[RMDB]
Chemical mapping of a 207-nucleotide RNA with 2A3. The 2A3 profile rests on 744 reads. 2A3 adducts were read by reverse transcription with SuperScript II with manganese. The RNA was probed in 150 mM KOAc, 10 mM MgCl2 and 150 mM bicine (pH 8.5) at 24 C. The data come from the RNA Mapping Database (RMDB), library OK3TST.

RNA sequence: GGGAACGACUCGAGUAGAGUCGAAAACUACAUGCUUUUGCAUGUAGAGCAUGCUUUUGCAUGCGAGCCACGUGACCUAGACUCCACCUUUUUUUGGUGCGUGGCAGUCAUCAGCUUUUGGACUUUUGUCCUUGCUGAUGUCUGGAGGAGUUAGGGACAGUACACCAUGCUUCGGCAUGGUGUACUGAAAAGAAACAACAACAACAAC
Reactivity to 2A3 in 0.01 (KOAc 150mM, MgCl2 10mM, bicine 150mM(pH8.5), 24C), signal-to-noise 2, nucleotides 027 to 156: c000u000a000c000a000u020g000c040u060u140u250u300g000c020a000u000g000u000a000g000a000g000c000a000u000g040c020u150u130u130u300g000c000a000u000g000c010g010a040g040c000c000a010c020g030u040g100a100c000c040u060a100g150a070c000u000c000c000a000c010c000u020u070u130u050u000u160u280g010g000u020g000c020g020u010g000g000c000a000g000u010c000a000u000c000a010g030c020u120u180u200u180g010g010a000c010u070u210u180u300g000u000c000c000u020u000g000c000u000g000a020u000g000u000c000u000g000g020a000g010g020a000g000u030u020a040g000g000g010a000